The record gives the reactivity of an RNA of 177 nucleotides to 2A3 and DMS. The reactions ran in a buffer of 150 mM KOAc, 10 mM MgCl2 and 150 mM bicine (pH 8.5), at 24 C. For 2A3, 15,671 sequencing reads were counted. DMS (dimethyl sulfate) methylates the pairing face of unpaired adenines and cytosines. It was measured as part of the RMDB library OK1LIB.

RNA sequence: GGGAACGACUCGAGUAGAGUCGAAAAACUAUUUGUUCUAUAGCAAACAAACCCGAAACACAGGAUAUAUUUGUUAUAUAUGCUUUGUGGCACACAGCUGUUAGGACAUGAGCCAUCAGGGUCCAAAGAUUUAGGAUUAGUUCGCUAAUCCUAAAUCAAAAGAAACAACAACAACAAC
Reactivity to 2A3 in 0.01 (KOAc 150mM, MgCl2 10mM, bicine 150mM(pH8.5), 24C), signal-to-noise 9, nucleotides 027 to 126: a000c090u100a110u090u060u060g030u010u020c040u050a070u060a050g020c050a030a050a090c020a040a090a040c030c010c020g060a060a100a000c040a000c010a020g020g030a010u010a000u000a020u040u160u130g160u300u020a010u020a000u010a000u080g140c000u110u070u090g020u020g030g010c040a020c000a000c000a070g020c010u030g040u130u060a030g010g020a010c020a050u080g030a010g030c020c010a040u070c050a050g070g010g080u030c010c010a050a060a020
Reactivity to DMS in 0.01 (KOAc 150mM, MgCl2 10mM, bicine 150mM(pH8.5), 24C), signal-to-noise 6, nucleotides 027 to 126: a140c070u020a100u010u000u000g010u000u000c050u010a030u020a020g020c050a140a090a070c140a050a120a140c040c010c040g010a100a100a060c030a010c050a020g010g010a000u010a010u000a010u010u020u030g000u020u010a050u010a000u000a010u000g010c020u010u010u010g030u000g020g010c100a060c100a070c110a060g000c030u020g000u020u010a030g000g010a010c030a040u020g010a070g030c060c050a080u030c080a040g000g010g020u000c030c030a070a060a110
DMS adducts were read by reverse transcription with MarathonRT.